Chemical mapping of a 177-nucleotide RNA with DMS and 2A3.
For DMS, 39,795 sequencing reads were counted.
For 2A3, 31,788 sequencing reads were counted.
The reactions ran in a buffer of 150 mM KOAc, 10 mM MgCl2 and 150 mM bicine (pH 8.5), at 24 C.
Values cover nucleotides 27 to 126.
DMS (dimethyl sulfate) methylates the pairing face of unpaired adenines and cytosines.
RNA sequence: GGGAACGACUCGAGUAGAGUCGAAAAUAGAUCCAUGCUGUCCUGAUGUCGAUCUGCUCCAAGACAUCAGUCUUUUGACUAGGCUCUUUUGAGCGACAGCCGCGGAGCAGAUUUUGGAUCUAGAAAAGGGAGGCAGGUAGUUCGCUACCUGUUUCCCAAAAGAAACAACAACAACAAC
Reactivity to DMS in 0.01 (KOAc 150mM, MgCl2 10mM, bicine 150mM(pH8.5), 24C), signal-to-noise 9, nucleotides 027 to 126: u010a010g000a010u000c000c000a050u020g010c090u030g000u010c020c050u000g010a080u030g020u010c100g000a050u010c010u000g000c000u000c000c040a060a300g000a040c020a090u030c130a100g010u000c000u010u010u030u040g010a030c030u010a100g000g000c010u000c020u010u020u030u040g000a010g010c030g000a120c050a040g010c040c000g000c300g000g000a010g010c000a010g000a050u000u000u010u020g010g000a010u000c000u000a020g010a040a070a090a120
Reactivity to 2A3 in 0.01 (KOAc 150mM, MgCl2 10mM, bicine 150mM(pH8.5), 24C), signal-to-noise 9, nucleotides 027 to 126: u040a000g010a000u000c010c010a030u120g010c030u040g010u040c010c020u060g050a060u060g040u050c020g010a040u010c010u010g000c000u000c000c000a040a010g000a000c010a030u030c010a020g000u010c010u030u140u080u210g020a020c030u020a050g010g020c000u000c000u020u230u070u230g010a010g000c000g000a010c050a020g000c010c000g010c030g000g000a000g000c000a000g000a010u070u050u020u030g000g000a000u000c000u000a020g070a010a070a010a020